Notes
This 170-nucleotide RNA was probed chemically with DMS. It was measured as part of the RMDB library 15KLIB. The RNA was probed in 150 mM KOAc, 10 mM MgCl2 and 150 mM bicine (pH 8.5) at 24 C.
RNA sequence: GGGAACGACUCGAGUAGAGUCGAAAAGGGAACAAGGAAACAGGAGGAGGAUCGGUAGAAAAGAGCGAGACCUCCGAUUCGAGAGCUCCUGGACUCCUCGGCUCUGGAGUCCUCCGACCCGUGAGGUAAAUCGCCGAGUUCGCUCGGCGAAAAAGAAACAACAACAACAAC
Reactivity to DMS in 0.01 (KOAc 150mM, MgCl2 10mM, bicine 150mM(pH8.5), 24C), signal-to-noise 3, nucleotides 027 to 129: g030g040g010a050a150c150a130a060g010g010a020a040a030c030a110g020g030a030g000g000a130g000g050a080u010c060g000g040u060a040g000a070a030a120a110g000a110g010c070g030a090g000a000c160c040u000c040c010g030a040u000u010c040g010a090g020a170g040c000u010c020c040u060g030g030a100c160u030c030c050u030c110g000g000c030u040c060u030g000g000a070g060u010c000c040u020c070c030g030a120c000c000c000g050u000g020a050g040g020u000a040a060a080